[RMDB]
RNA sequence: GGGAACGACUCGAGUAGAGUCGAAAAGCCUGUGGUCGCAGUUAUUCAGGACGCUGAGACUGAACGAUCACAUGAGGCCAGCCAAGGAUUCGAGGUGUCAGUGAGCCACGAAUGUACCACUGCACUAGUCAUACGAUGCGUUCGCGCAUCGUAUGACAAAAGAAACAACAACAACAAC
Reactivity to DMS in 0.01 (KOAc 150mM, MgCl2 10mM, bicine 150mM(pH8.5), 24C), signal-to-noise 1, nucleotides 027 to 126: g020c010c000u000g030u000g000g020u000c000g060c040a030g010u000u000a080u020u000c040a040g000g010a160c300g020c020u000g000a020g000a040c020u000g000a130a120c010g000a010u000c000a000c010a050u010g020a020g010g020c000c030a120g010c060c040a110a130g000g030a160u000u000c060g070a160g000g010u000g000u000c050a010g000u000g000a190g000c080c060a040c070g000a090a050u050g000u000a090c010c020a030c050u000g030c020a060c020u000a110
Reactivity to 2A3 in 0.01 (KOAc 150mM, MgCl2 10mM, bicine 150mM(pH8.5), 24C), signal-to-noise 2, nucleotides 027 to 126: g030c010c010u010g000u010g010g020u010c020g000c000a000g020u000u050a270u200u020c000a030g170g090a270c260g000c300u010g000a010g000a000c000u000g020a150a030c010g000a000u000c000a000c000a030u150g120a030g040g000c000c000a000g040c050c000a080a060g100g000a110u130u140c070g020a090g070g010u010g140u180c000a050g010u010g050a020g040c030c050a090c060g160a190a030u270g010u050a030c020c010a040c020u000g030c010a000c030u000a050

Annotation:
The record gives the reactivity of an RNA of 177 nucleotides to DMS and 2A3. Values cover nucleotides 27 to 126. The reactions ran in a buffer of 150 mM KOAc, 10 mM MgCl2 and 150 mM bicine (pH 8.5), at 24 C. For DMS, 1,042 sequencing reads were counted. High 2A3 reactivity points to a flexible backbone, as in loops and unpaired stretches.